[RMDB]
RNA sequence: GGGAACGACUCGAGUAGAGUCGAAAACAACUGUUAUCUUGCCCCUGCAUUGUUAACACUCCAACAAAUAGAGUUGAAGUUUAAUCCACCUGCUCUACAAAGGGCUGGUGAAGCUGCUAACUUUUGUACGGACUCAAGUUCGCUUGAGUCAAAAGAAACAACAACAACAAC
Reactivity to DMS in 0.01 (KOAc 150mM, MgCl2 10mM, bicine 150mM(pH8.5), 24C), signal-to-noise 9, nucleotides 027 to 129: c060a110a120c080u020g000u000u010a090u020c070u010u020g000c030c030c050c060u030g030c030a020u050u000g020u010u010a040a050c110a090c070u020c040c040a010a000c090a070a120a140u060a110g050a120g040u000u000g000a070a050g000u010u020u040a050a100u040c120c010a000c030c000u030g000c000u000c000u010a150c300a120a140a060g020g000g010c060u040g020g030u000g010a020a010g040c110u040g010c030u030a040a040c000u030u000u000u050g000u020a050c190g020
Reactivity to 2A3 in 0.01 (KOAc 150mM, MgCl2 10mM, bicine 150mM(pH8.5), 24C), signal-to-noise 9, nucleotides 027 to 129: c020a010a020c070u080g030u140u070a150u110c060u050u120g050c010c000c000c020u030g010c010a050u050u050g030u040u030a030a020c030a000c060u010c020c010a020a020c020a040a210a140u260a060g130a010g040u000u020g020a030a010g010u030u070u170a060a060u060c030c000a000c010c000u020g010c000u010c000u050a130c100a060a210a090g000g000g000c000u000g010g000u000g010a020a010g020c040u040g000c020u020a020a040c000u060u040u030u050g040u040a060c090g070

Structure probing data (DMS and 2A3) for a 170-nucleotide construct. Values cover nucleotides 27 to 129. For 2A3, 73,825 sequencing reads were counted. In probing experiments dimethyl sulfate is read out at A N1 and C N3, which are open when not base-paired. High 2A3 reactivity points to a flexible backbone, as in loops and unpaired stretches.